[RMDB]
The data come from the RNA Mapping Database (RMDB), libraries RFM100 and RFMREP. Structure probing data (DMS and 2A3) for a 177-nucleotide construct. DMS adducts were read by reverse transcription with MarathonRT. The RNA was probed in 150 mM KOAc, 10 mM MgCl2 and 150 mM bicine (pH 8.5) at 24 C. 2A3 adducts were read by reverse transcription with SuperScript II with manganese.
RNA sequence: GGGAACGACUCGAGUAGAGUCGAAAAGAAAGAAAGAUCGUAACUUGUGUGGCUUCGAAUGUACCUAGUUGAGGAAAAAUCAGUUUGGAUUUUGUUACCUCUGGUAUUCGAGCCAAUAAGUUCGGAAAUGUUACUGAACAUUCGUGUUCAGUAACAUAAAAGAAACAACAACAACAAC
Reactivity to DMS in 0.01 (KOAc 150mM, MgCl2 10mM, bicine 150mM(pH8.5), 24C), signal-to-noise 7, nucleotides 027 to 126: g010a100a100a090g000a100a100a090g010a110u020c020g010u030a010a020c010u000u000g020u000g020u020g010g000c000u010u020c010g010a020a020u010g010u020a020c010c010u000a090g020u020u010g000a020g000g010a030a010a010a010a010u010c010a210g020u020u040u020g010g010a010u000u000u000u000g000u020u030a100c010c000u000c010u000g010g010u000a030u000u000c000g010a030g010c000c000a030a000u000a010a010g010u000u000c030g010g010a060a100
Reactivity to 2A3 in 0.01 (KOAc 150mM, MgCl2 10mM, bicine 150mM(pH8.5), 24C), signal-to-noise 9, nucleotides 027 to 126: g090a010a070a000g120a040a090a010g090a080u130c040g030u160a010a020c000u020u010g010u020g040u060g070g000c030u140u090c090g010a010a030u140g030u150a020c010c010u080a120g120u100u190g020a020g000g040a010a010a000a010a010u020c030a080g150u110u260u300g130g000a020u020u010u010u040g130u150u150a110c000c000u010c020u020g000g000u000a000u010u010c000g000a000g000c000c000a000a000u000a000a000g000u000u010c010g010g040a050a260